[RMDB]
RNA sequence: GGGAACGACUCGAGUAGAGUCGAAAACUGUCCUGUGUGGAAGUACGUGAGUACUUCACGCUCUACGGGAGUAGAGCCACACAGAUCGUGGAGCGAUGUCUUGGUACUACUCCCGUAGUACACGUAUGACUCACGUCAUACCAAGACGACAGCCACGCUACUAUGACUCCUUCGGGAGUCAUAGUAGAAAAGAAACAACAACAACAAC
Reactivity to 2A3 in 0.01 (KOAc 150mM, MgCl2 10mM, bicine 150mM(pH8.5), 24C), signal-to-noise 5, nucleotides 027 to 156: c010u010g000u000c000c000u000g000u000g000u000g010g010a040a050g040u170a010c000g000u010g010a010g000u070a220c030u080u140c050a040c060g060c020u000c000u010a000c000g010g000g000a020g000u000a000g000a010g040c000c000a000c000a000c000a000g010a010u010c010g050u130g120g130a140g170c000g010a010u010g010u010c000u000u010g000g000u010a010c000u000a000c000u000c000c040c000g000u000a000g000u020a010c070a000c060g110u170a040u160g050a010c000u010c020a000c010g000u000c000a000u010a010c010c000a000a010g000a000c010g000a000c010a000g000c000c000a040c040g020
Reactivity to DMS in 0.01 (KOAc 150mM, MgCl2 10mM, bicine 150mM(pH8.5), 24C), signal-to-noise 2, nucleotides 027 to 156: c010u000g010u000c000c020u000g020u000g000u050g010g000a060a090g020u010a010c000g020u000g000a200g040u000a020c110u000u000c040a070c070g010c060u000c010u000a010c000g050g000g000a210g030u000a010g010a170g030c000c020a030c030a050c010a060g020a040u000c010g030u010g010g030a250g030c050g030a040u010g000u010c010u010u020g000g000u000a170c020u000a000c010u000c080c020c110g010u000a010g000u000a020c090a170c130g040u000a060u010g010a070c000u000c120a130c160g010u000c050a070u010a010c020c000a010a030g000a060c010g030a040c010a060g020c000c060a100c090g030
This 207-nucleotide RNA was probed chemically with 2A3 and DMS. For 2A3, 6,162 sequencing reads were counted. 2A3 adducts were read by reverse transcription with SuperScript II with manganese. Values cover nucleotides 27 to 156.